This 207-nucleotide RNA was probed chemically with 2A3 and DMS. The data come from the RNA Mapping Database (RMDB), library OK3TST. For DMS, 3,226 sequencing reads were counted.
RNA sequence: GGGAACGACUCGAGUAGAGUCGAAAAACAUCAGAAUUUUGGAGACUCACAGCUUGUGCGUUUGGGUGUUGAUUAUCCAUACUACCCACAACUUGCACAGCUUGUUCCAUCUCAGGCAGCUAUGCUGUUUGGCAGUGAGAUCACAGCGCAUGAAGUACAAGUAGGGAGUGUUCGCACUCCCUACUUGAAAAGAAACAACAACAACAAC
Reactivity to 2A3 in 0.01 (KOAc 150mM, MgCl2 10mM, bicine 150mM(pH8.5), 24C), signal-to-noise 4, nucleotides 027 to 156: a000c030a070u120c070a080g170a300a120u050u040u110u210g090g000a010g060a050c010u000c040a030c000a010g000c040u210u210g000u010g010c030g000u020u010u020g000g000g000u020g070u120u140g090a190u080u260a130u160c060c000a070u070a130c020u110a040c010c010c000a030c070a050a020c060u110u300g010c000a000c000a000g020c000u020u080g010u030u000c000c000a030u060c080u000c020a030g020g020c000a000g000c030u160a060u300g000c000u000g030u040u050u060g040g000c020a010g010u030g080a080g000a030u080c020a010c030a050g020c030g020c070a070u110g060a060a010g100u160a060
Reactivity to DMS in 0.01 (KOAc 150mM, MgCl2 10mM, bicine 150mM(pH8.5), 24C), signal-to-noise 2, nucleotides 027 to 156: a030c100a090u030c050a110g000a110a150u000u000u000u000g030g040a250g010a050c010u000c070a090c110a090g000c030u000u030g050u000g040c050g020u000u000u000g000g020g000u000g000u010u000g000a270u000u010a140u000c110c110a130u010a020c020u010a050c000c000c060a070c120a060a050c070u000u000g030c020a010c040a030g020c050u000u000g050u000u000c090c050a090u000c040u010c020a000g000g000c020a040g040c000u000a050u010g040c000u000g040u010u010u020g010g000c060a100g020u000g000a070g030a080u000c050a090c030a070g020c070g000c110a130u000g000a080a090g000u020a170
The 2A3 profile rests on 1,616 reads. For DMS the reverse transcriptase was MarathonRT.